RNA sequence: GGGAACGACUCGAGUAGAGUCGAAAAUCCGUUGUCUUCGGACAACGGAAAAGAAGCGCGGACACAUAAGCACGAGCUCGCCGUGACGCGCAAAGGCGAUAAAAAGCUCAAACUUCGGUUUGAGCAACAGAUCUACGAGCUUCGGCUCGUAGAUCUGAAAAGAAACAACAACAACAAC
Reactivity to 2A3 in 0.01 (KOAc 150mM, MgCl2 10mM, bicine 150mM(pH8.5), 24C), signal-to-noise 1, nucleotides 027 to 126: u010c000c000g000u000u010g000u050c000u020u060c260g110g000a010c000a000a000c020g020g030a010a010a000a020g050a090a070g010c010g000c000g020g150a080c010a010c020a170u190a200a030g070c020a000c070g040a040g080c000u000c000g030c020c010g010u030g020a020c010g000c000g020c050a020a020a040g020g000c000g010a000u130a130a180a020a010a000g030c000u010c000a000a030a010c020u060u090c120g080g030u010u010u000g000a000g030c000a000a020
Reactivity to DMS in 0.01 (KOAc 150mM, MgCl2 10mM, bicine 150mM(pH8.5), 24C), signal-to-noise 1, nucleotides 027 to 126: u000c000c000g020u060u000g000u000c000u000u020c220g000g000a000c000a000a000c000g000g000a000a000a110a070g000a040a170g070c010g020c010g010g000a070c130a070c100a060u000a140a300g010c010a010c070g000a140g030c190u000c000g010c100c050g010u010g000a080c000g020c000g110c030a040a060a060g000g000c030g000a060u000a240a070a060a160a240g000c000u000c000a010a020a000c000u000u000c170g020g050u000u000u010g000a040g000c000a070a000
The data come from the RNA Mapping Database (RMDB), library M2PK50. The record gives the reactivity of an RNA of 177 nucleotides to 2A3 and DMS. For DMS, 582 sequencing reads were counted. The RNA was probed in 150 mM KOAc, 10 mM MgCl2 and 150 mM bicine (pH 8.5) at 24 C. Reactivities are given for positions 27 through 126. 2A3 adducts were read by reverse transcription with SuperScript II with manganese.